Conditions: 150 mM KOAc, 10 mM MgCl2 and 150 mM bicine (pH 8.5), 24 C.
An RNA of 177 nucleotides, treated with 2A3 and DMS and read out base by base.
RNA sequence: GGGAACGACUCGAGUAGAGUCGAAAAGUAGGCAGUUCGCUGCCUACAAAAUGACGUCGGGAUCGCCCCCAGUCAGCGCGUUGCGCCCACUGGGGCAUUUGUGAAAACUCCGGCCUUCGGGCCGGAGCAUAGGUGUCAUGUUCGCAUGACACCUAUGAAAAGAAACAACAACAACAAC
Reactivity to 2A3 in 0.01 (KOAc 150mM, MgCl2 10mM, bicine 150mM(pH8.5), 24C), signal-to-noise 2, nucleotides 027 to 126: g020u010a010g010g000c010a000g030u080u120c140g050c090u010g010c000c010u000a010c010a000a010a010a000u090g000a000c030g060u050c040g010g040g020a080u050c050g010c000c000c020c000c000a000g040u070c060a010g010c030g000c070g300u260u300g010c000g000c020c030c010a020c000u020g000g000g020g000c050a050u080u120u110g110u040g070a020a060a050a030c000u000c000c000g020g010c020c050u030u070c180g060g010g010c010c010g000g000a000g000
Reactivity to DMS in 0.01 (KOAc 150mM, MgCl2 10mM, bicine 150mM(pH8.5), 24C), signal-to-noise 3, nucleotides 027 to 126: g000u000a000g000g010c000a000g010u000u010c250g030c010u000g020c000c000u000a010c000a010a040a060a090u010g000a040c050g010u000c030g000g000g000a120u000c060g000c140c010c000c000c010a010g010u000c170a080g020c000g010c020g010u010u010g030c020g030c000c020c300a020c010u000g000g000g010g030c080a010u000u010u010g020u010g000a050a130a090a250c000u000c000c000g010g010c000c010u000u010c170g010g000g040c000c000g020g000a000g000
For 2A3 the reverse transcriptase was SuperScript II with manganese. High DMS reactivity at an A or C suggests that its Watson-Crick edge is free.